[RMDB]
RNA sequence: GGGAACGACUCGAGUAGAGUCGAAAAAGAACGAAAGUUAGGGGAUCGAAGAGGAUCAGAUACCCUCGUAGUCUUAACUAUAAACUAUGCCACUUAUGUGUUGUCUAACUCAUCUUUUUGAGUUUGGAGACACCUGUGAAUUCGUUCACAGGUGUCUAAAAGAAACAACAACAACAAC
Reactivity to 2A3 in 0.01 (KOAc 150mM, MgCl2 10mM, bicine 150mM(pH8.5), 24C), signal-to-noise 1, nucleotides 027 to 126: a000g040a030a010c010g030a160a000a040g080u090u100a050g000g000g040g000a100u010c000g060a190a000g030a080g230g010a060u000c080a010g100a180u260a170c000c030c010u010c000g000u000a040g000u000c070u150u020a080a000c000u000a040u070a250a010a010c050u060a020u100g100c040c010a100c000u210u100a110u060g100u000g050u010u060g020u010c000u010a010a000c000u000c000a000u140c110u010u120u030u020u000g000a000g000u000u030u020g010g000
Reactivity to DMS in 0.01 (KOAc 150mM, MgCl2 10mM, bicine 150mM(pH8.5), 24C), signal-to-noise 2, nucleotides 027 to 126: a130g010a060a040c060g000a110a090a030g070u000u000a010g000g000g010g000a050u010c050g010a100a180g030a060g000g000a060u010c140a110g030a100u050a110c090c000c000u000c020g000u000a120g000u030c020u000u000a050a070c110u000a140u020a100a030a050c090u030a080u010g000c070c040a110c090u000u010a110u000g000u000g000u020u000g000u000c020u000a020a000c000u000c010a010u030c300u000u000u030u000u000g000a010g000u010u000u040g000g050
Source: RMDB libraries RFM100 and RFMREP, as collected in RNAgym. The record gives the reactivity of an RNA of 177 nucleotides to 2A3 and DMS. The reactions ran in a buffer of 150 mM KOAc, 10 mM MgCl2 and 150 mM bicine (pH 8.5), at 24 C. DMS adducts were read by reverse transcription with MarathonRT.